[RMDB]
RNA sequence: GGGAACGACUCGAGUAGAGUCGAAAAGGAAUCGACAGUAGAGUGUAUCAUGUCAGUAAGCAUGCCGGGGAAUGGUGGUUUACCCCGUUAUCAAAUGUUUACCGACCAAUAAUUGGCGAAACUCGUUAGGCCCGUCCACACUUCGGUGUGGACGGAAGUCCUAGCUAUAGUUCGCUAUAGCUAGGACAAAAGAAACAACAACAACAAC
Reactivity to 2A3 in 0.01 (KOAc 150mM, MgCl2 10mM, bicine 150mM(pH8.5), 24C), signal-to-noise 8, nucleotides 027 to 156: g060g010a040a060u090c040g040a030c040a040g070u130a040g040a050g040u090g020u060a080u180c070a060u190g020u010c010a010g010u010a000a020g000c010a010u030g050c050c010g000g000g000g020a010a030u060g030g030u030g010g040u060u060u190a130c000c000c000c000g010u050u050a110u120c070a130a070a030u010g000u000u000u010a010c010c010g020a030c010c010a030a040u150a160a070u090u060g030g000c030g040a040a040a040c050u040c040g060u040u050a050g040g020c010c010c000g000u000c000c000a000c000a000c000u030u070c180g070g000u000g000u000g000g000a000c000g000g000a010a010
Reactivity to DMS in 0.01 (KOAc 150mM, MgCl2 10mM, bicine 150mM(pH8.5), 24C), signal-to-noise 3, nucleotides 027 to 156: g000g010a070a110u010c030g040a040c020a060g020u000a080g010a080g040u000g040u000a060u010c030a300u020g010u000c010a050g020u000a020a040g010c010a040u000g010c170c020g050g010g040g030a060a160u010g030g000u000g010g010u000u010u000a300c000c010c010c010g000u010u000a070u000c180a100a070a060u010g020u010u000u000a030c000c010g020a030c010c090a050a080u010a050a090u000u020g020g000c010g000a120a080a090c030u000c040g010u000u000a090g020g010c100c010c010g000u000c000c000a010c030a010c010u000u010c300g020g020u000g000u000g010g010a000c000g010g000a010a050